The record gives the reactivity of an RNA of 177 nucleotides to 2A3 and DMS. For 2A3, 813 sequencing reads were counted. For 2A3 the reverse transcriptase was SuperScript II with manganese.

RNA sequence: GGGAACGACUCGAGUAGAGUCGAAAAUGACACAGAUUGUCACAGUCUUCCAGGGUAGGACCAGCUUCCUGCAAGGGAUGGUGGUGGGUGGCAGCAGAUCCCAGACACCUGUGUGGGCCAGGCUGCAACCCGUAGCGACGUUCGCGUCGCUACGGGUAAAAGAAACAACAACAACAAC
Reactivity to 2A3 in 0.01 (KOAc 150mM, MgCl2 10mM, bicine 150mM(pH8.5), 24C), signal-to-noise 2, nucleotides 027 to 126: u010g000a010c000a010c010a010g150a190u260u120g010u010c020a010c010a120g080u000c000u060u010c000c000a070g000g040g080u090a010g120g000a090c000c060a020g000c060u040u000c000c000u000g000c040a050a140g000g000g040a070u030g000g090u000g000g110u140g000g010g000u130g010g020c020a000g000c000a050g000a230u130c000c010c000a020g060a000c090a090c070c030u200g000u040g020u020g030g000g000c000c000a020g050g020c000u000g000c000a000
Reactivity to DMS in 0.01 (KOAc 150mM, MgCl2 10mM, bicine 150mM(pH8.5), 24C), signal-to-noise 2, nucleotides 027 to 126: u000g000a040c000a090c270a050g000a100u000u020g000u000c000a020c140a220g000u030c050u000u000c000c030a040g000g010g000u010a050g000g000a080c030c080a070g010c110u030u000c000c010u020g030c070a090a070g070g040g010a090u060g000g050u030g000g000u010g020g000g000u000g010g000c000a000g000c030a010g010a140u010c040c000c000a000g000a060c040a110c300c110u040g010u020g010u030g000g000g000c230c140a140g020g030c000u030g000c020a030